[RMDB]
RNA sequence: GGGAACGACUCGAGUAGAGUCGAAAAGCGUACUACACAGGCUAUUUGUCGGGUAAAGAGUAACUGGAGCUAUAAAAAUGGACAUCCCAAAUAGGAUGUCCGCCAAUAUAGCGUUGAAAGUUACUCUUUACCCGACAAAACAAUGCCUGUGUAUCGCGUUAGAUGAUAGCUUCGGCUAUCAUCUAACAAAAGAAACAACAACAACAAC
Reactivity to DMS in 0.01 (KOAc 150mM, MgCl2 10mM, bicine 150mM(pH8.5), 24C), signal-to-noise 2, nucleotides 027 to 156: g010c000g020u010a090c060u000a060c000a000c000a010g050g080c010u000a200u010u000u000g030u000c000g020g020g020u010a000a020a000g010a070g010u010a010a020c020u020g020g000a260g010c000u000a020u000a020a030a110a150a060u000g010g040a090c000a000u000c000c000c040a030a160a220u000a040g030g040a000u000g000u000c020c000g050c050c040a050a300u000a000u010a030g030c000g000u020u000g000a110a090a070g000u000u000a000c000u000c000u000u020u000a000c000c000c000g000a000c010a000a000a000a110c170a060a100u000g000c000c000u000g020u000g000u000a000u010c040g000c070

This 207-nucleotide RNA was probed chemically with DMS. The reactions ran in a buffer of 150 mM KOAc, 10 mM MgCl2 and 150 mM bicine (pH 8.5), at 24 C. DMS adducts were read by reverse transcription with MarathonRT. It was measured as part of the RMDB library RNAMAK.